[RMDB]
RNA sequence: GGGAACGACUCGAGUAGAGUCGAAAAAGGGGCGGUUGGCCUCGUAAAAAGCCGCACAGUUAUAGUUGCAAACGACGAUAACUACGCUCUAGCAGCUUAGGCUAGCUAGCCAUCUGACACAGGUCUCUCAAAUGGGCGGUGUAUACAGAUGGUCAUCCUCUAAUGUCCACUUCGGUGGACAUUAGAGAAAAGAAACAACAACAACAAC
Reactivity to DMS in 0.01 (KOAc 150mM, MgCl2 10mM, bicine 150mM(pH8.5), 24C), signal-to-noise 1, nucleotides 027 to 156: a120g000g010g010g020c000g030g060u020u000g030g050c070c000u000c070g000u000a020a130a030a070a130g000c030c000g000c020a100c040a160g000u010u000a050u000a020g040u000u020g050c040a050a090a260c000g020a040c000g000a120u000a050a020c040u000a060c110g000c060u000c010u000a100g000c050a010g010c000u000u020a060g020g020c010u000a050g090c080u000a120g010c020c010a000u020c020u000g010a120c020a050c010a100g010g030u000c000u000c050u000c030a100a090a090u030g030g040g010c010g050g040u000g000u000a070u000a300c010a030g000a050u030g000g020u000c020a230u000c020
Reactivity to 2A3 in 0.01 (KOAc 150mM, MgCl2 10mM, bicine 150mM(pH8.5), 24C), signal-to-noise 2, nucleotides 027 to 156: a000g030g010g020g010c050g020g050u070u040g100g060c000c000u010c000g000u010a020a050a020a020a000g040c040c040g040c020a050c060a080g030u030u020a030u080a110g010u000u060g090c160a090a090a030c130g000a000c000g020a020u010a110a010c020u070a020c120g000c030u010c000u050a000g000c010a000g010c030u050u080a060g060g050c020u010a030g000c010u010a020g060c000c000a000u000c000u000g020a010c000a010c020a030g010g220u070c060u040c010u040c170a180a160a090u210g000g000g010c040g000g000u010g010u000a140u040a070c010a010g000a000u000g000g030u010c010a050u060c000
Chemical mapping of a 207-nucleotide RNA with DMS and 2A3. Values cover nucleotides 27 to 156.